[RMDB]
RNA sequence: GGGAACGACUCGAGUAGAGUCGAAAAGCUUCCGUCGAACGCGAAAGUCCGACGGCGGCCAUGAGUCGCAACGCAAAGCCGCGGCAAGUGGAGUUAGCGAGAAGAGACUAGGCUUUGGUUUCUUCAAAUUAGUGAGUGUGGUUCGCCACACUCACAACUAACUACCGUGCUUCGGCACGGUAGUUAGAAAAGAAACAACAACAACAAC
Reactivity to 2A3 in 0.01 (KOAc 150mM, MgCl2 10mM, bicine 150mM(pH8.5), 24C), signal-to-noise 2, nucleotides 027 to 156: g020c020u050u050c020c000g010u000c000g000a070a040c000g010c090g180a300a130a020g070u060c030c000g010a010c000g010g000c010g050g000c000c000a010u020g050a030g010u010c010g050c000a080a030c100g010c150a100a130a010g040c050c040g020c000g000g020c090a030a050g020u010g030g060a130g050u080u210a020g130c110g030a060g010a140a030g020a010g010a030c020u040a010g090g000c030u070u010u070g000g000u000u010u030c040u020u000c030a030a080a300u140u070a040g000u000g000a000g000u000g000u010g020g020u040u070c220g000c010c000a010c000a000c000u000c000a000c000a000a000